An RNA of 177 nucleotides, treated with 2A3 and DMS and read out base by base.
For DMS, 4,012 sequencing reads were counted.
[RMDB]
RNA sequence: GGGAACGACUCGAGUAGAGUCGAAAAGAUAUGGAGCAGAAGUGGCGUUGAAAUAUAGUCGAUCGGAAACGAUCGAGCUAUAUGGAGCCACGGUAUGCUCCUAAGUCAAAAUGGCACUUCGGUGCCAGAGUGUACUAUCGUUCGCGAUAGUACACUCAAAAGAAACAACAACAACAAC
Reactivity to 2A3 in 0.01 (KOAc 150mM, MgCl2 10mM, bicine 150mM(pH8.5), 24C), signal-to-noise 3, nucleotides 027 to 126: g030a000u050a030u200g000g020a010g000c000a000g000a210a020g080u000g020g000c070g140u280u120g020a030a030a010u010a000u000a020g040u040c000g000a010u000c000g050g040a070a020a060c010g010a000u010c000g000a030g000c000u010a000u010a000u010g020g010a000g000c000c000a000c000g000g000u020a010u000g000c000u000c010c010u000a020a010g020u000c010a000a000a050a300u130g010g000c000a010c020u080u060c300g170g010u000g000c020c000a000
Reactivity to DMS in 0.01 (KOAc 150mM, MgCl2 10mM, bicine 150mM(pH8.5), 24C), signal-to-noise 4, nucleotides 027 to 126: g010a020u000a300u000g000g000a030g020c000a010g000a300a300g020u000g020g000c010g010u010u000g020a150a120a020u000a010u000a010g000u000c000g000a010u000c000g000g000a150a090a220c010g010a010u000c010g000a010g000c000u000a000u000a000u000g000g000a160g020c000c010a010c000g020g010u000a090u000g000c000u000c000c000u000a030a050g000u010c060a060a080a110a190u010g000g010c010a010c000u000u030c250g030g000u000g000c000c000a030